[RMDB]
RNA sequence: GGGAACGACUCGAGUAGAGUCGAAAAAGAUGGGAGUAAUCAGUUUCGUCGAACUCUAUUACACGUAUCUGGGAGUGUCGUCUUGGAGAAUUGUUUCGUUGAUGAUGAUGCGCGACCUCACCGGAUUCUCGUCCAUUCGCGAACUAUUGACGUACUAUACAGGAGUACUUUUCGAAGUACUCCUGUAAAAAGAAACAACAACAACAAC
Reactivity to DMS in 0.01 (KOAc 150mM, MgCl2 10mM, bicine 150mM(pH8.5), 24C), signal-to-noise 3, nucleotides 027 to 156: a060g000a100u000g000g030g010a110g020u020a070a080u000c110a060g010u000u000u000c020g030u010c030g010a110a060c040u010c060u010a090u000u000a120c070a110c080g010u000a060u000c020u000g040g000g010a110g030u010g030u000c030g090u000c050u010u010g010g000a180g020a150a070u000u000g010u000u000u000c080g000u010u000g010a080u010g000a090u000g020a080u000g000c050g000c050g010a030c040c020u000c020a130c040c020g040g000a070u000u000c040u000c030g020u000c050c050a260u000u000c040g010c040g010a050a050c060u000a120u000u010g030a080c050g020u000a130c070u010a300
Reactivity to 2A3 in 0.01 (KOAc 150mM, MgCl2 10mM, bicine 150mM(pH8.5), 24C), signal-to-noise 4, nucleotides 027 to 156: a000g070a040u060g010g020g020a100g020u040a060a040u070c090a010g020u030u080u070c060g020u030c030g020a030a030c010u010c040u070a070u070u130a050c100a000c080g080u070a030u010c000u000g000g000g010a040g010u160g010u020c000g030u000c050u040u140g070g060a070g010a130a070u120u050g050u070u090u060c080g050u070u100g050a080u020g000a000u040g010a010u030g090c040g000c000g060a010c010c000u030c000a220c020c000g000g000a000u040u020c040u020c020g020u000c030c020a100u070u030c040g000c020g050a070a050c020u060a100u090u160g020a010c020g040u110a030c040u140a000

An RNA of 207 nucleotides, treated with DMS and 2A3 and read out base by base.
The 2A3 profile rests on 2,202 reads.
Conditions: 150 mM KOAc, 10 mM MgCl2 and 150 mM bicine (pH 8.5), 24 C.
The DMS profile rests on 7,427 reads.
Source: RMDB library OK3TST, as collected in RNAgym.